[RMDB]
RNA sequence: GGGAACGACUCGAGUAGAGUCGAAAAGAGGCUACUGGAAUCUUGGUAGAAGACCCAGAAGGCAAUGCGUUAGAAAUUUAUUUUGGUUCAAAAAAAGUCCAUCAAAAUCCUACUUCGCUGCAACUGGCGAUGGGUAGUGAUUCGUCACUACCCAUCGAAAAGAAACAACAACAACAAC
Reactivity to DMS in 0.01 (KOAc 150mM, MgCl2 10mM, bicine 150mM(pH8.5), 24C), signal-to-noise 2, nucleotides 027 to 126: g020a160g010g000c010u020a090c070u020g050g010a140a100u010c010u000u000g000g000u020a070g040a040a080g010a230c180c060c070a050g000a150a090g010g010c040a050a030u030g000c060g000u010u010a060g010a050a060a140u000u020u000a090u030u020u000u000g010g000u030u000c000a000a010a100a030a110a060a130g030u000c000c040a020u000c040a050a030a030a070u020c030c000u000a090c130u000u000c050g010c000u000g000c070a100a040c090u000g000g010
Reactivity to 2A3 in 0.01 (KOAc 150mM, MgCl2 10mM, bicine 150mM(pH8.5), 24C), signal-to-noise 5, nucleotides 027 to 126: g070a030g050g000c010u030a020c030u070g030g060a160a140u080c030u060u050g110g020u150a040g070a210a030g040a090c010c010c000a010g040a090a060g020g010c050a050a080u090g040c020g030u030u040a080g060a150a160a120u090u150u050a290u020u080u060u080g070g000u100u110c100a210a050a000a000a000a020a030g020u000c010c000a050u020c030a080a040a030a090u090c010c000u000a070c020u060u040c020g000c000u020g010c030a070a060c050u050g110g000